[RMDB]
RNA sequence: GGGAACGACUCGAGUAGAGUCGAAAAGAUAUGGACAGUUUGUCAGAAGGAGUAUGUAGCGAAGAACUAGCAUCGGAAACGAUGCUAGGGAGCUAUGAAACUUCUUGGAUUUAACUGUCCUAAGUCAGAUAGGGACAUACUUCGGUAUGUCCCUAUCAAAAGAAACAACAACAACAAC
Reactivity to DMS in 0.01 (KOAc 150mM, MgCl2 10mM, bicine 150mM(pH8.5), 24C), signal-to-noise 3, nucleotides 027 to 126: g010a060u000a300u000g000g000a030c000a030g010u020u000u010g010u010c010a040g000a020a010g000g020a080g030u000a070u010g010u000a010g010c020g010a110a130g040a120a210c000u000a000g000c000a010u000c000g020g000a080a130a200c010g030a020u000g000c010u000a000g000g010g030a070g010c010u000a010u000g000a130a210a120c000u000u000c010u010u000g000g000a010u000u010u000a010a040c010u000g000u000c000c000u000a010a040g000u000c080a080
Reactivity to 2A3 in 0.01 (KOAc 150mM, MgCl2 10mM, bicine 150mM(pH8.5), 24C), signal-to-noise 3, nucleotides 027 to 126: g020a050u090a020u100g030g010a000c000a010g050u020u020u000g000u050c020a000g120a140a030g030g020a010g020u020a020u300g020u020a020g000c010g150a300a010g020a120a000c000u000a000g000c000a010u010c010g040g000a070a040a030c020g000a000u000g000c000u000a000g000g000g010a010g000c000u000a000u060g080a060a060a020c010u010u030c000u040u110g020g030a010u290u300u160a000a030c010u000g020u020c000c000u000a020a000g040u020c040a010
This 177-nucleotide RNA was probed chemically with DMS and 2A3. For 2A3, 4,546 sequencing reads were counted. Conditions: 150 mM KOAc, 10 mM MgCl2 and 150 mM bicine (pH 8.5), 24 C. Source: RMDB library TTRDES, as collected in RNAgym. For DMS the reverse transcriptase was MarathonRT. Values cover nucleotides 27 to 126.